[RMDB]
RNA sequence: GGGAACGACUCGAGUAGAGUCGAAAAUUGCGUCACUAACCUUGAAGAAAGGGACAACUAUUGGUAGGCAGUUUGGGUGGGGCGCCACGCCUCUAAGAAGAAAACAGAGGUCUCCAAUGGUUAGCUCCAUGUCGUGGGAGUUCGCUCCCACGACAUGAAAAGAAACAACAACAACAAC
Reactivity to DMS in 0.01 (KOAc 150mM, MgCl2 10mM, bicine 150mM(pH8.5), 24C), signal-to-noise 2, nucleotides 027 to 126: u050u060g000c040g010u040c000a090c240u040a120a040c010c030u010u030g030a130a070g030a130a040a000g000g040g000a070c120a040a090c020u030a010u000u020g000g000u010a060g020g000c050a060g000u000u000u000g060g040g030u010g020g020g000g020c030g000c100c050a060c080g020c000c000u000c030u030a110a050g000a060a300g020a080a010a040a040c080a030g000a040g000g000u000c090u000c020c050a040a000u000g010g000u000u010a070g010c070u030c020
Reactivity to 2A3 in 0.01 (KOAc 150mM, MgCl2 10mM, bicine 150mM(pH8.5), 24C), signal-to-noise 2, nucleotides 027 to 126: u100u110g020c030g020u010c010a010c060u020a080a040c000c000u040u070g060a130a100g090a100a090a040g000g000g040a020c000a020a000c010u020a010u060u020g040g020u090a080g080g010c020a100g030u070u100u070g120g000g000u020g000g000g000g000c010g100c120c000a050c040g020c000c000u020c000u040a070a130g070a080a060g070a010a110a000a010c090a040g030a020g010g060u000c000u000c020c000a000a000u000g020g000u020u020a030g000c000u010c010